[RMDB]
RNA sequence: GGGAACGACUCGAGUAGAGUCGAAAAGACGGAUUCUUCGGAAUCCGUCAAAGUGACGGUGAAAAAUGGCCAAUGCGCCAGCUACCACCGACACAGGGCGCAAAACUGGAGUGUUCGCACUCCAGAACCAUAAUACUUCCUUCGGGAAGUAUUAUGGAAAAGAAACAACAACAACAAC
Reactivity to 2A3 in 0.01 (KOAc 150mM, MgCl2 10mM, bicine 150mM(pH8.5), 24C), signal-to-noise 5, nucleotides 027 to 126: g010a010c000g010g000a000u020u010c020u060u080c210g060g000a010a000u000c000c000g000u000c000a000a010a000g010u000g010a020c010g010g000u020g040a060a040a020a030a070u100g010g000c030c040a190a300u230g030c170g000c050c000a000g000c000u040a040c030c000a000c000c000g010a000c010a000c000a010g070g040g000c090g000c080a030a080a050a040c010u010g000g010a000g010u020g030u060u150c220g030c080a000c000u010c010c000a000g000a000a000
Reactivity to DMS in 0.01 (KOAc 150mM, MgCl2 10mM, bicine 150mM(pH8.5), 24C), signal-to-noise 6, nucleotides 027 to 126: g000a020c000g010g000a000u000u000c000u000u000c200g020g000a010a000u000c000c000g000u000c000a010a030a080g030u000g010a150c020g000g010u000g010a040a060a100a200a110u000g010g020c010c020a140a100u000g020c130g020c000c000a050g000c130u000a160c160c000a010c020c010g020a100c010a010c020a160g000g010g010c120g000c110a050a060a110a170c000u000g000g000a010g030u000g010u000u010c190g010c010a010c000u000c000c000a000g000a040a070